[RMDB]
RNA sequence: GGGAACGACUCGAGUAGAGUCGAAAAGCUGUCAGCUUCGGCUGACAGCAAACGCUCAUCUCAUGGAGCGCAAGACGAAUAGCUACAUAUUCGACAUGACAAAAAGCUGCGCGUUCGCGCGCAGCAAGGAGCGAACUAUGUUCGCAUAGUUCGCUCCAAAAGAAACAACAACAACAAC
Reactivity to 2A3 in 0.01 (KOAc 150mM, MgCl2 10mM, bicine 150mM(pH8.5), 24C), signal-to-noise 1, nucleotides 027 to 126: g000c000u010g000u000c000a000g010c000u030u090c130g060g000c000u040g000a000c000a000g030c010a000a000a000c010g000c000u000c000a090u050c030u010c080a030u050g030g000a020g000c050g000c180a140a020g100a040c000g010a010a010u020a030g020c100u190a050c090a210u060a030u000u020c010g030a010c000a020u040g050a040c140a000a130a000a000a020g010c010u010g010c000g000c030g020u030u040c270g020c010g060c000g000c090a010g020c000a010a000
Reactivity to DMS in 0.01 (KOAc 150mM, MgCl2 10mM, bicine 150mM(pH8.5), 24C), signal-to-noise 1, nucleotides 027 to 126: g000c000u000g000u000c010a000g000c020u000u000c250g000g000c000u000g000a000c000a010g030c000a020a080a060c050g010c000u000c000a060u000c110u000c030a080u000g020g010a030g000c050g000c090a060a040g020a110c030g000a050a030u000a040g010c110u020a150c190a100u010a000u000u000c000g010a080c060a030u010g000a080c110a050a190a110a130a080g020c040u000g010c000g030c000g000u010u060c220g010c000g010c000g000c000a020g010c000a030a010